This 177-nucleotide RNA was probed chemically with 2A3 and DMS. Reactivities are given for positions 27 through 126. The 2A3 profile rests on 16,063 reads. For DMS the reverse transcriptase was MarathonRT. The data come from the RNA Mapping Database (RMDB), library TTRDES.
RNA sequence: GGGAACGACUCGAGUAGAGUCGAAAAGAUAUGGAGCUUUGACACAUCAACAGCUUGAUUCGGAAACGAAUCAAGACAUGAUGGUCGGGAGCUCCUAAGUCAAAAGUCACUGCUUCGGCAGUGACAACAUUCUGAAAUGGUUCGCCAUUUCAGAAUGAAAAGAAACAACAACAACAAC
Reactivity to 2A3 in 0.01 (KOAc 150mM, MgCl2 10mM, bicine 150mM(pH8.5), 24C), signal-to-noise 5, nucleotides 027 to 126: g040a010u080a060u200g000g010a000g000c020u140u030u070g100a150c190a010c000a300u040c040a040a240c050a190g090c010u010u000g000a000u000u010c010g010g030a040a060a070c020g010a000a000u000c000a000a010g020a010c000a040u140g000a000u010g010g010u010c060g050g060g010a000g000c000u000c000c000u000a110a010g050u020c030a060a000a140a090g000u000c000a000c010u000g000c000u050u070c180g150g000c000a000g000u000g010a000c000a000a000
Reactivity to DMS in 0.01 (KOAc 150mM, MgCl2 10mM, bicine 150mM(pH8.5), 24C), signal-to-noise 6, nucleotides 027 to 126: g010a050u000a300u000g000g000a020g010c000u000u000u000g000a020c010a120c010a020u000c010a030a110c300a160g000c010u000u010g000a010u000u000c000g010g000a120a100a250c000g000a010a010u000c000a010a000g000a030c100a150u000g010a010u000g000g000u000c020g020g020g000a010g000c000u010c000c000u000a020a070g000u000c050a120a110a110a170g010u000c000a000c000u000g000c000u000u010c190g010g020c000a000g000u000g000a000c010a050a110